[RMDB]
RNA sequence: GGGAACGACUCGAGUAGAGUCGAAAAACUGUCGACGGCACGCCUCUUCCUUCAUCGAUCGUCCGACAAAGCGAUGGCGAGGGCAGGGCGCUCACGCCGUACACGGGCGGCAUCGUGCCACUGAGAAGCUACGGGCACGGUUCGCCGUGCCCGUAGCAAAAGAAACAACAACAACAAC
Reactivity to 2A3 in 0.01 (KOAc 150mM, MgCl2 10mM, bicine 150mM(pH8.5), 24C), signal-to-noise 2, nucleotides 027 to 126: a030c140u130g020u020c000g100a070c030g020g000c060a000c030g000c000c010u150c030u040u030c000c000u050u040c030a040u040c000g220a030u000c000g000u000c060c030g260a210c120a270a290a000g110c190g040a040u010g000g000c000g000a000g000g030g040c030a000g040g150g040c220g030c050u100c040a000c000g000c000c000g090u000a000c000a090c030g030g000g000c050g000g000c030a070u000c140g160u230g000c020c060a040c090u190g090a000g000a110a000